[RMDB]
RNA sequence: GGGAACGACUCGAGUAGAGUCGAAAAAGUCAGAGGGCGCUACCAUGCAAACUAGGGCUGGCUACUCUUGCACAGAAUCGCAUCUCGAUAAUUGUCAGUGCAAGAAGGACAAUUAUACCAUUUAAUGAAAACGUUUACCUGUUCGCAGGUAAACGAAGCAAAUCAUAAACUUCGGUUUAUGAUUUGCAAAAGAAACAACAACAACAAC
Reactivity to 2A3 in 0.01 (KOAc 150mM, MgCl2 10mM, bicine 150mM(pH8.5), 24C), signal-to-noise 6, nucleotides 027 to 156: a000g030u010c010a010g010a030g040g030g020c050g020c020u100a210c060c070a070u190g010c020a050a070a110c030u070a050g020g070g000c010u010g020g000c000u110a120c010u010c000u000u010g000c010a000c000a010g120a090a100u140c090g020c110a100u020c050u040c080g030a010u020a030a020u020u010g020u010c010a010g000u010g020c000a000a000g010a000a010g010g000a000c000a010a010u030u020a020u030a090c040c040a110u150u180u220a180a160u170g080a040a040a020a020c010g000u000u000u000a000c000c000u000g030u050u060c230g010c050a000g000g020u000a000a000a000c000g000a020a000
Reactivity to DMS in 0.01 (KOAc 150mM, MgCl2 10mM, bicine 150mM(pH8.5), 24C), signal-to-noise 2, nucleotides 027 to 156: a090g010u000c030a080g040a120g000g010g020c200g060c060u000a090c060c040a040u000g060c070a110a200a100c060u000a090g020g000g010c060u010g020g020c050u000a130c030u000c040u010u000g000c020a080c040a200g000a060a080u010c120g010c020a090u000c020u000c020g000a080u030a060a030u030u000g010u030c030a300g010u020g040c000a110a060g010a120a170g000g000a050c030a020a010u010u000a020u000a130c100c010a100u010u000u000a090a130u010g000a100a100a070a100c000g000u000u000u010a010c000c000u010g040u000u010c300g030c060a000g000g010u000a000a000a010c000g000a010a100